[RMDB]
This 177-nucleotide RNA was probed chemically with DMS and 2A3. Values cover nucleotides 27 to 126.
RNA sequence: GGGAACGACUCGAGUAGAGUCGAAAAGAUAUGGACCACAAGAGCGAUAAGCUGGUAUCGGAAACGAUACCCAGCUUUUGACGCUCGGGGUGGUCCUAAGUCAAAAUCUUACGGUUCGCCGUAAGAACCAAAUAAAAAACUUCGGUUUUUUAUUUGGAAAAGAAACAACAACAACAAC
Reactivity to DMS in 0.01 (KOAc 150mM, MgCl2 10mM, bicine 150mM(pH8.5), 24C), signal-to-noise 2, nucleotides 027 to 126: g000a020u000a300u020g000g000a000c000c000a010c010a230a100g000a010g020c000g020a110u030a020a010g030c000u000g000g000u000a000u000c000g020g000a090a050a080c000g010a010u000a000c230c090c040a010g000c000u000u000u000u000g000a190c070g020c010u000c000g010g010g030g030u010g000g000u000c000c000u000a010a070g000u010c020a120a090a120a120u000c000u000u010a000c010g000g000u010u030c260g020c000c000g000u000a000a010g000a040a270
Reactivity to 2A3 in 0.01 (KOAc 150mM, MgCl2 10mM, bicine 150mM(pH8.5), 24C), signal-to-noise 1, nucleotides 027 to 126: g010a000u050a010u150g000g000a000c030c000a010c040a100a080g020a010g020c020g120a170u040a300a000g000c000u010g010g000u010a010u000c000g000g000a030a010a050c010g020a020u000a010c030c010c010a000g000c000u000u030u000u120g170a070c020g000c000u000c000g000g020g020g020u000g000g010u010c000c010u010a080a000g010u000c000a040a000a030a300u080c010u000u000a000c000g000g110u020u150c300g050c110c020g000u000a000a020g000a020a030